RNA sequence: GGGAACGACUCGAGUAGAGUCGAAAAAGGGUGCCGGCGUUGUAGUUGACGAAGCCCUCAUGCAUCACGGUGGUGCCCGGCGCCAGGUGAGCGCCCAACCGCACGCGGUCGGCAUCGGCGAUACGUACAUUAGGUGGAUGUUCGCAUCCACCUAAUGAAAAGAAACAACAACAACAAC
Reactivity to DMS in 0.01 (KOAc 150mM, MgCl2 10mM, bicine 150mM(pH8.5), 24C), signal-to-noise 6, nucleotides 027 to 126: a100g010g010g030u000g010c010c010g000g000c030g000u000u000g030u000a060g020u000u010g020a110c140g000a300a180g010c040c030c030u000c080a070u010g010c060a140u010c080a080c100g010g020u010g010g030u010g020c020c080c080g000g010c010g000c010c020a130g010g020u010g010a100g010c050g010c010c030c040a030a020c010c020g020c040a050c140g010c030g020g010u000c050g010g000c020a020u000c010g000g020c100g000a110u010a060c150g020u000a170
Reactivity to 2A3 in 0.01 (KOAc 150mM, MgCl2 10mM, bicine 150mM(pH8.5), 24C), signal-to-noise 2, nucleotides 027 to 126: a000g050g000g010u010g000c000c000g010g020c020g020u010u080g050u090a140g000u030u060g040a030c090g050a080a000g010c010c030c010u030c020a060u200g090c050a090u070c050a030c070g060g090u130g000g040u150g010c030c000c020g030g000c000g020c000c000a030g000g210u090g010a100g000c030g000c010c000c000a000a000c000c000g030c080a030c050g300c040g140g020u010c000g000g000c000a030u030c000g030g010c040g030a030u050a220c030g070u040a040